Structure probing data (DMS and 2A3) for a 207-nucleotide construct. It was measured as part of the RMDB library OK3TST. The DMS profile rests on 2,062 reads.
RNA sequence: GGGAACGACUCGAGUAGAGUCGAAAAGAAGAAAAGAGGAGUCCAGGAUAACUCAAUCAAUUAAGUUAGGCAGUGACAAUAGGUGUAUGUUUUGAGUGUGUAGGUGCUGUUCUGAGAACUUUCCAUCACUGUUUAACCCUCACAACAGCCCUGAGAAGAUAAUUUUAUUAUUCGUAAUAAAAUUAUCAAAAGAAACAACAACAACAAC
Reactivity to DMS in 0.01 (KOAc 150mM, MgCl2 10mM, bicine 150mM(pH8.5), 24C), signal-to-noise 1, nucleotides 027 to 156: g000a130a120g000a110a030a110a150g010a100g000g010a160g050u000c030c030a140g030g010a140u000a030a080c040u010c030a100a250u000c070a090a150u010u000a090a120g010u000u010a030g000g000c010a030g010u010g010a040c080a030a130u010a100g000g060u000g000u010a070u000g010u000u060u000u000g010a060g000u000g020u000g000u000a060g000g010u000g070c030u010g010u000u010c030u030g000a100g010a030a030c050u010u000u000c070c000a070u010c030a040c030u010g020u000u000u000a040a130c030c040c020u000c030a010c050a030a040c010a070g020c010c010c050u000g000a100g010a060a210
Reactivity to 2A3 in 0.01 (KOAc 150mM, MgCl2 10mM, bicine 150mM(pH8.5), 24C), signal-to-noise 2, nucleotides 027 to 156: g070a070a010g060a000a180a020a020g070a040g010g040a030g020u030c050c050a050g060g010a040u110a180a060c040u010c030a040a160u020c020a020a140u210u160a150a050g070u010u030a010g020g000c030a030g050u030g030a060c070a080a160u110a220g130g000u140g000u010a110u120g070u040u080u070u090g050a130g020u070g010u060g030u150a030g060g010u080g030c000u010g030u070u030c020u030g050a050g010a100a060c050u030u110u050c090c000a060u070c050a040c030u010g000u010u000u010a020a030c060c000c000u010c000a030c010a020a040c000a000g000c000c020c000u040g000a050g010a080a040